[RMDB]
RNA sequence: GGGAACGACUCGAGUAGAGUCGAAAAGAUAUGGAACGGCCACACGACGAUGAAAUCGGAAACGAUGGAGUCGGUGGUCCGUUCCUAAGUCAAAACUAGAUCUUUAACUUCGGUUAAAGAUCUAGAACAGGUACGUAUGGUUCGCCAUACGUACCUGAAAAGAAACAACAACAACAAC
Reactivity to 2A3 in 0.01 (KOAc 150mM, MgCl2 10mM, bicine 150mM(pH8.5), 24C), signal-to-noise 1, nucleotides 027 to 126: g000a000u060a030u150g020g000a010a010c010g050g020c010c000a020c030a090c060g030a010c010g160a300u070g030a060a020a000u010c010g040g030a010a090a060c010g000a000u000g000g020a000g000u020c010g020g000u000g010g000u020c010c010g000u010u000c000c000u000a040a000g020u000c040a020a000a140a020c000u020a000g000a010u000c000u000u000u000a000a010c010u020u070c250g100g000u010u040a010a000a000g010a010u000c000u000a000g000a000a000
Reactivity to DMS in 0.01 (KOAc 150mM, MgCl2 10mM, bicine 150mM(pH8.5), 24C), signal-to-noise 2, nucleotides 027 to 126: g010a030u000a300u020g010g000a020a000c020g000g010c000c010a020c000a150c000g020a030c000g000a090u000g040a050a090a020u000c000g000g010a140a080a140c000g000a030u000g010g010a100g040u000c000g010g020u010g000g000u010c000c000g010u000u010c000c000u000a000a090g000u000c010a090a060a070a160c000u000a010g000a000u000c000u000u000u000a000a000c000u000u010c190g020g010u000u000a000a010a000g010a010u000c000u000a000g000a110a110
This 177-nucleotide RNA was probed chemically with 2A3 and DMS. 2A3 adducts were read by reverse transcription with SuperScript II with manganese. The RNA was probed in 150 mM KOAc, 10 mM MgCl2 and 150 mM bicine (pH 8.5) at 24 C.